[RMDB]
RNA sequence: GGGAACGACUCGAGUAGAGUCGAAAAGUCGACGUUCGCGUCGACAAAAAAGAUAUGGAAUGCUACACGCUUUUGACGCCUCUAUAGUCGGAAACGACUAUAGUAGGCGAUAAGCGUGGUCAUUCCUAAGUCAAAAACGCUGCCUUCGGGCAGCGAAGUCAUGUCAUAGCUUCGGCUAUGACAUGACAAAAGAAACAACAACAACAAC
Reactivity to 2A3 in 0.01 (KOAc 150mM, MgCl2 10mM, bicine 150mM(pH8.5), 24C), signal-to-noise 2, nucleotides 027 to 156: g000u000c000g000a030c010g020u090u210c300g020c020g080u000c000g010a020c010a030a050a000a000a000a000g030a010u070a010u050g000g010a000a000u000g040c070u180a140c010a000c020g010c010u000u070u120u180g290a150c100g000c010c020u000c000u000a000u000a000g000u000c010g020g050a040a090a060c000g000a000c000u000a000u000a000g000u030a000g000g010c000g000a000u010a000a000g000c000g000u000g000g000u020c000a000u010u020c000c000u000a110a020g030u020c040a010a000a120a090a030c010g010c030u020g000c010c010u040u060c140g050g000g000c000a000g000c020g000a030a010